[RMDB]
RNA sequence: GGGAACGACUCGAGUAGAGUCGAAAAGAUAUGGAAAGGGUGCCAGUGGCCUACACCGCCCGAUGAAAGAAGUCGGAAACGACUUCUGGAGGGUCGUGUAGGCCACGGUAAUACCCUUUCCUAAGUCGUACUAUAGUUGGUUCGCCAACUAUAGUACAAAAGAAACAACAACAACAAC
Reactivity to DMS in 0.01 (KOAc 150mM, MgCl2 10mM, bicine 150mM(pH8.5), 24C), signal-to-noise 4, nucleotides 027 to 126: g010a120u010a300u000g000g000a020a010a010g000g000g090u000g020c020c000a170g060u000g010g010c000c000u000a010c000a010c010c210g000c000c000c000g010a110u020g000a160a200a030g000a010a010g020u000c000g010g000a180a130a300c000g010a020c000u000u000c000u000g000g000a040g040g020g040u000c300g000u000g010u000a000g020g000c000c000a000c000g010g010u000a080a090u020a110c000c000c000u000u000u000c000c000u000a030a090g000u010c120